[RMDB]
RNA sequence: GGGAACGACUCGAGUAGAGUCGAAAAAAGAGAAGACAAGAGACGGAGGCUUUCCCCAUGACGCUGGAGACAUCCUGGAAGGGGAAAGAGGAAGGUGGAAAAGAAGGGGCGGGCCUCCCGAUCCGAGCAUCUUCUAUAUGUUCGCAUAUAGAAGAUGAAAAGAAACAACAACAACAAC
Reactivity to 2A3 in 0.01 (KOAc 150mM, MgCl2 10mM, bicine 150mM(pH8.5), 24C), signal-to-noise 2, nucleotides 027 to 126: a000a000g170a010g030a150a020g080a050c070a080a050g020a020g000a050c020g000g000a000g010g010c000u020u000u020c000c000c020c000a040u080g040a010c040g010c050u010g000g000a030g020a040c010a030u020c010c000u040g060g150a120a040g110g010g000g010a090a170a050g020a020g010g000a010a000g010g010u050g000g080a060a120a040a080g090a090a110g000g000g000g000c010g000g010g000c000c000u000c010c000c000g000a010u000c010c010g020a010g020
Reactivity to DMS in 0.01 (KOAc 150mM, MgCl2 10mM, bicine 150mM(pH8.5), 24C), signal-to-noise 4, nucleotides 027 to 126: a040a060g010a120g020a100a050g010a130c110a140a110g000a070g010a300c300g020g000a030g020g000c020u000u000u000c010c010c000c020a100u010g010a100c070g000c040u000g000g010a250g010a030c120a070u000c010c020u000g010g010a110a100g010g020g000g010a020a020a070g010a050g000g010a280a060g030g000u010g000g000a100a050a080a150g000a130a080g000g000g010g010c090g000g000g010c030c010u000c020c000c010g010a180u000c010c050g000a110g000